An RNA of 177 nucleotides, treated with DMS and read out base by base.
It was measured as part of the RMDB library OK2TRN.

[RMDB]
RNA sequence: GGGAACGACUCGAGUAGAGUCGAAAAUGAUAGCUCACUGCAGCCUCCAACUCCUGGGCCCAGGCAAUCCUCCCACCUUGGCCUCCUCAGAAGCUGGGAUUACAGGCAUGACCCUCUGUGCCUGGCCCCAAAGUGCAUGGUUCGCCAUGCACUUUGGAAAAGAAACAACAACAACAAC
Reactivity to DMS in 0.01 (KOAc 150mM, MgCl2 10mM, bicine 150mM(pH8.5), 24C), signal-to-noise 2, nucleotides 027 to 126: u020g000a110u000a100g010c010u010c050a100c050u010g010c050a110g010c050c040u020c020c030a030a080c070u000c010c030u010g030g000g030c050c000c070a060g000g010c080a070a120u000c030c040u000c000c020c030a130c060c050u000u020g030g020c010c020u000c030c040u000c090a060g010a110a090g010c020u010g030g010g000a070u010u000a090c040a020g010g020c030a020u000g010a110c050c010c030u010c090u000g020u010g030c030c000u000g030g000c100c050